This 177-nucleotide RNA was probed chemically with 2A3 and DMS.
Reactivities are given for positions 27 through 126.
The DMS profile rests on 1,695 reads.
For 2A3 the reverse transcriptase was SuperScript II with manganese.
Conditions: 150 mM KOAc, 10 mM MgCl2 and 150 mM bicine (pH 8.5), 24 C.
RNA sequence: GGGAACGACUCGAGUAGAGUCGAAAAAUGACUACAGCACUGGGAGACACAGGUAGUGCUGCACCUGGCUGGGCUCAGGAGCCUUCCUGUGAGAGAAGGGUUUUGCUUUUCUUAUCAGGAUGGUUAACGCGUUAAAGGGAUUCGUCCCUUUAACGCGAAAAGAAACAACAACAACAAC
Reactivity to 2A3 in 0.01 (KOAc 150mM, MgCl2 10mM, bicine 150mM(pH8.5), 24C), signal-to-noise 1, nucleotides 027 to 126: a000u030g030a000c020u120a140c050a010g000c020a000c090u040g050g060g060a100g060a050c070a020c010a120g110g030u120a000g020u040g110c000u040g050c020a050c030c010u050g070g010c080u150g000g190g000c060u020c040a040g030g070a050g010c010c010u020u000c000c010u010g000u000g020a020g000a000g000a000a010g050g050g050u050u190u220u300g040c000u030u020u040u020c030u020u010a050u150c010a020g000g010a020u020g000g020u080u110a140a040
Reactivity to DMS in 0.01 (KOAc 150mM, MgCl2 10mM, bicine 150mM(pH8.5), 24C), signal-to-noise 1, nucleotides 027 to 126: a100u000g000a170c010u010a100c040a030g010c020a070c020u010g000g000g020a130g010a150c100a100c110a060g020g040u000a040g020u000g010c010u000g000c070a090c030c030u000g000g030c080u000g030g010g020c080u000c020a100g010g000a060g000c010c010u010u000c000c000u000g010u000g000a020g000a020g000a000a010g000g000g000u000u020u010u010g010c010u000u000u010u000c000u010u000a030u020c000a030g000g010a040u000g000g010u000u000a080a090